[RMDB]
RNA sequence: GGGAACGACUCGAGUAGAGUCGAAAAAGGGAAAAUAAAGGUCAAGGGAUGCCACGCUGAAAACGACAUUGUUGCGCGCCAGUGCAGAUGUUGUGGCGUGCAGUUGAAGGAUCCUAACGACAACCUCACCGGGAAGCAUUACACGCAAAAUGACUGGGUCAUACCGUUAGUUCGCUAACGGUAUGACAAAAGAAACAACAACAACAAC
Reactivity to 2A3 in 0.01 (KOAc 150mM, MgCl2 10mM, bicine 150mM(pH8.5), 24C), signal-to-noise 2, nucleotides 027 to 156: a000g140g020g030a020a060a010a020u140a030a120a030g090g010u050c080a060a030g000g010g020a030u120g110c030c000a000c000g030c000u060g010a100a110a030a080c050g040a020c030a030u040u140g190u200u130g030c020g000c020g080c200c180a080g000u010g010c030a040g040a100u030g030u090u040g020u030g010g030c000g030u010g000c010a020g030u080u110g080a060a060g000g020a020u000c000c000u010a090a060c080g000a020c000a000a010c000c000u020c000a030c010c040g010g000g010a030a000g000c000a000u060u120a050c060a000c050g020c030a000a000a030a220u170g060a060c070u050g080g000
Reactivity to DMS in 0.01 (KOAc 150mM, MgCl2 10mM, bicine 150mM(pH8.5), 24C), signal-to-noise 1, nucleotides 027 to 156: a100g010g000g000a240a090a100a110u020a050a150a120g000g000u000c000a090a240g040g020g000a090u010g030c010c010a000c020g010c000u000g000a050a090a090a150c040g000a030c000a030u020u000g000u000u000g000c040g000c000g010c190c180a150g080u010g020c040a170g000a060u020g010u000u000g020u020g000g000c000g000u000g020c030a030g000u000u000g030a140a190g000g000a050u000c020c020u020a020a100c140g010a110c030a050a060c050c030u010c030a120c060c010g000g010g000a120a130g020c020a040u000u000a050c010a050c010g060c150a030a120a130a140u000g000a060c040u000g010g000